The record gives the reactivity of an RNA of 207 nucleotides to DMS and 2A3. Values cover nucleotides 27 to 156. For 2A3 the reverse transcriptase was SuperScript II with manganese. Conditions: 150 mM KOAc, 10 mM MgCl2 and 150 mM bicine (pH 8.5), 24 C. As a SHAPE reagent, 2A3 marks flexible, mostly unpaired nucleotides at the ribose 2'-OH.
RNA sequence: GGGAACGACUCGAGUAGAGUCGAAAAGGAACUGCAUGACGCAUUGCUGUUUCACUGUGAACACGGUUUGGGACGUCUUUUGUCGGUGGCUUUGCCUCGUCAUCGUGUUUUUGCGUUAGGAUCGUCAUUAUUCAACGUCAACGAUAUUUACGAAUGCAUUAUCAGUAUCUUUCGAGAUACUGAUAAUAAAAGAAACAACAACAACAAC
Reactivity to DMS in 0.01 (KOAc 150mM, MgCl2 10mM, bicine 150mM(pH8.5), 24C), signal-to-noise 7, nucleotides 027 to 156: g020g000a070a100c040u000g010c060a130u000g020a150c060g010c070a150u000u000g020c010u000g020u000u000u000c020a150c110u000g010u010g000a070a100c030a060c030g020g020u000u000u010g030g010g020a060c040g010u000c050u010u000u000u000g020u000c040g030g020u000g010g000c020u010u000u000g020c030c020u000c060g030u000c070a050u000c040g020u000g010u000u000u010u000u000g010c020g020u000u000a190g020g010a090u000c020g000u000c050a120u010u000a160u000u000c080a050a060c070g020u000c030a040a070c030g010a070u000a080u010u000u000a110c060g010a070a080u000g030c110
Reactivity to 2A3 in 0.01 (KOAc 150mM, MgCl2 10mM, bicine 150mM(pH8.5), 24C), signal-to-noise 9, nucleotides 027 to 156: g040g000a030a020c010u050g000c020a030u080g090a080c080g030c110a070u050u090g010c020u030g030u030u040u030c090a090c090u110g050u080g130a090a010c040a010c050g020g040u070u090u090g150g020g030a010c020g060u060c020u010u120u060u100g090u070c040g010g030u050g000g020c030u100u090u170g020c010c010u050c030g060u030c010a030u010c010g010u010g040u030u030u020u080u080g020c010g000u020u050a080g020g030a040u040c010g090u020c130a060u040u180a060u090u110c040a060a040c070g060u070c070a060a040c050g040a030u040a100u140u160u090a070c070g060a120a050u120g050c060